[RMDB]
Chemical mapping of a 177-nucleotide RNA with 2A3.
Source: RMDB library OK1LIB, as collected in RNAgym.
The RNA was probed in 150 mM KOAc, 10 mM MgCl2 and 150 mM bicine (pH 8.5) at 24 C.
RNA sequence: GGGAACGACUCGAGUAGAGUCGAAAAUGGGGCAGGGCAGCCAGGUUCCAGAGCAGCAGGCAUGUGCAUUAUGGGUGCCAGGUGGCCAGUGAGGGCCCGAGGACCACGCAGCAGAGUCCCCCACGGGCGUGGCCAGCAUUUUCGAAUGCUGGCCACGAAAAGAAACAACAACAACAAC
Reactivity to 2A3 in 0.01 (KOAc 150mM, MgCl2 10mM, bicine 150mM(pH8.5), 24C), signal-to-noise 1, nucleotides 027 to 126: u120g000g000g000g050c040a060g110g020g030c000a000g030c000c000a040g000g060u060u050c010c000a000g020a000g000c030a030g000c010a000g020g080c070a040u080g100u120g150c020a020u000u160a080u300g000g000g000u000g000c000c000a000g000g000u040g100g000c030c040a030g060u010g140a180g000g000g010c000c000c120g000a090g070g000a090c020c000a030c050g080c000a130g000c020a000g000a000g140u030c000c000c000c020c100a080c160g010g000g050
The 2A3 profile rests on 547 reads.